[RMDB]
RNA sequence: GGGAACGACUCGAGUAGAGUCGAAAAGAUAUGGAGAGGGGCGUGCCGAAGAACGCUUUCGGAAACGAAAGCGGGAGGAACUACACGCCUACUCUCCUAAGUCAAAAGCGCGGGUUCGCCCGCGCAACGUACUUAAAGGCUUCGGCCUUUAAGUACGAAAAGAAACAACAACAACAAC
Reactivity to DMS in 0.01 (KOAc 150mM, MgCl2 10mM, bicine 150mM(pH8.5), 24C), signal-to-noise 2, nucleotides 027 to 126: g000a060u010a290u000g000g000a020g010a060g000g000g000g000c000g010u000g010c010c040g000a110a130g020a230a270c000g000c000u000u000u020c000g000g000a100a050a200c000g020a010a000a010g010c010g010g000g000a120g010g000a080a100c060u030a170c030a000c000g000c000c000u000a010c000u000c000u000c000c000u000a020a080g000u000c050a070a070a080a130g000c010g020c010g020g000g010u000u010c270g020c010c000c000g000c000g020c030a010a020
Structure probing data (DMS) for a 177-nucleotide construct. DMS adducts were read by reverse transcription with MarathonRT. Conditions: 150 mM KOAc, 10 mM MgCl2 and 150 mM bicine (pH 8.5), 24 C. The DMS profile rests on 1,851 reads. The data come from the RNA Mapping Database (RMDB), library TTRDEL.